[RMDB]
RNA sequence: GGGAACGACUCGAGUAGAGUCGAAAAUAUGGAUAACGGGCUGGUAACUCACCAUAUCUAACACGUCUCACUGGCACGUCUAAAGUGGUGUGCUAUAGACUCUCAUCUUUGGAGUAGUAUAGUAUUGUUAUUCACAGAAAGUAUUAAUACAGAUGGGCGCUUGUGUAAAUUUCGAUUUACACAAGCGAAAAGAAACAACAACAACAAC
Reactivity to 2A3 in 0.01 (KOAc 150mM, MgCl2 10mM, bicine 150mM(pH8.5), 24C), signal-to-noise 4, nucleotides 027 to 156: u070a020u020g010g010a040u050a180a060c080g000g000g000c030u030g040g090u060a040a030c000u000c020a030c000c000a010u010a030u110c080u050a060a050c080a010c200g000u000c000u000c000a030c010u000g010g000c000a010c020g000u010c020u180a300a160a080g180u140g060g000u010g000u000g000c000u000a010u080a060g010a010c000u010c000u000c010a050u020c020u090u080u170g080g030a050g050u050a020g000u030a080u030a140g060u020a050u080u080g050u040u070a080u110u140c030a030c010a160g140a050a130a000g010u030a020u100u080a080a070u070a040c040a030g040a020u050g000g000g000
Reactivity to DMS in 0.01 (KOAc 150mM, MgCl2 10mM, bicine 150mM(pH8.5), 24C), signal-to-noise 1, nucleotides 027 to 156: u000a010u000g000g040a100u000a070a090c050g010g020g050c000u000g040g000u020a090a090c000u010c010a120c060c010a020u000a040u000c020u010a110a150c080a090c090g030u010c000u010c000a130c080u000g030g030c050a030c050g000u010c040u000a060a170a230g040u040g000g010u010g000u010g010c020u010a070u000a060g000a110c030u000c020u000c080a060u010c130u000u010u000g020g010a040g030u010a070g020u000a050u000a150g020u000a090u000u010g010u010u000a040u010u010c040a140c110a150g000a060a100a130g010u000a040u020u020a070a180u010a080c040a060g010a130u020g000g000g020